Structure probing data (DMS and 2A3) for a 177-nucleotide construct. For 2A3, 994 sequencing reads were counted. For DMS the reverse transcriptase was MarathonRT. The reactions ran in a buffer of 150 mM KOAc, 10 mM MgCl2 and 150 mM bicine (pH 8.5), at 24 C.
RNA sequence: GGGAACGACUCGAGUAGAGUCGAAAAAAAAUGGCGGACGAACUGUUUGAUGCAUUUAUUUCGCUUUUGGACAACAGAUAUUAUAGGACUGUUCAUUAUGGACCUGCUGAACUCGCUGCUUGGUUGACCUCAUUAACUCCUUCGGGAGUUAAUGAGGAAAAGAAACAACAACAACAAC
Reactivity to DMS in 0.01 (KOAc 150mM, MgCl2 10mM, bicine 150mM(pH8.5), 24C), signal-to-noise 1, nucleotides 027 to 126: a000a010a030a010u000g000g040c010g000g000a030c050g000a070a100c130u020g010u030u010u000g000a080u020g020c040a060u000u040u010a120u050u000u000c060g010c040u020u000u010u000g010g010a150c160a020a040c020a020g000a090u060a060u010u000a170u080a050g030g000a040c190u000g010u010u000c050a080u000u020a040u010g020g000a080c050c030u000g000c080u020g000a030a070c080u000c050g000c010u000g000c000u000u020g010g000u000u010g010a200
Reactivity to 2A3 in 0.01 (KOAc 150mM, MgCl2 10mM, bicine 150mM(pH8.5), 24C), signal-to-noise 2, nucleotides 027 to 126: a000a000a010a000u070g050g000c030g020g000a050c020g050a040a070c060u040g200u010u030u140g200a090u220g000c000a020u000u120u070a160u010u100u080c020g000c000u080u010u000u000g010g020a000c000a010a000c020a070g080a110u100a090u200u240a100u190a090g180g000a060c020u000g000u020u000c020a060u080u110a170u140g060g000a020c000c000u000g020c000u010g030a030a010c010u010c010g060c020u100g020c020u060u120g070g010u020u040g000a020